[RMDB]
RNA sequence: GGGAACGACUCGAGUAGAGUCGAAAAGUUGGGAGUCUCCGUUUUCUAAGAAAUUUACGGCAUCCUGAUUAAGAACGCUGAAUUUUUAAUCUAAAAAUCAGGUUCACCGAAUACUGCGCGUCUCUAUAUGUCGAUAAGAUUUCGAUCUUAUCGACAUAAAAGAAACAACAACAACAAC
Reactivity to DMS in 0.01 (KOAc 150mM, MgCl2 10mM, bicine 150mM(pH8.5), 24C), signal-to-noise 2, nucleotides 027 to 126: g020u030u020g000g000g000a100g000u000c140u010c030c010g010u000u010u040u020c070u040a060a250g010a050a110a080u010u020u000a100c030g000g020c300a120u010c000c010u010g000a010u010u000a110a070g020a030a030c030g000c040u020g000a030a020u000u000u000u000u000a040a120u030c110u000a000a000a020a020a050u000c000a000g000g000u000u000c050a120c050c030g000a150a050u040a080c100u020g000c030g000c050g000u000c010u000c040u010a120u050
Reactivity to 2A3 in 0.01 (KOAc 150mM, MgCl2 10mM, bicine 150mM(pH8.5), 24C), signal-to-noise 4, nucleotides 027 to 126: g040u050u030g010g010g010a030g050u020c050u010c060c010g000u040u060u020u000c040u100a140a060g080a040a160a060u200u180u100a050c030g000g000c010a080u020c000c000u000g000a010u040u060a110a050g000a050a000c030g020c300u020g060a100a110u020u040u000u030u100a150a240u080c140u180a080a030a000a020a020u000c000a000g010g050u000u010c000a020c030c020g020a040a050u110a180c050u080g030c060g000c010g030u010c000u010c010u020a010u010
This 177-nucleotide RNA was probed chemically with DMS and 2A3. Source: RMDB libraries RFM100 and RFMREP, as collected in RNAgym. The reactions ran in a buffer of 150 mM KOAc, 10 mM MgCl2 and 150 mM bicine (pH 8.5), at 24 C.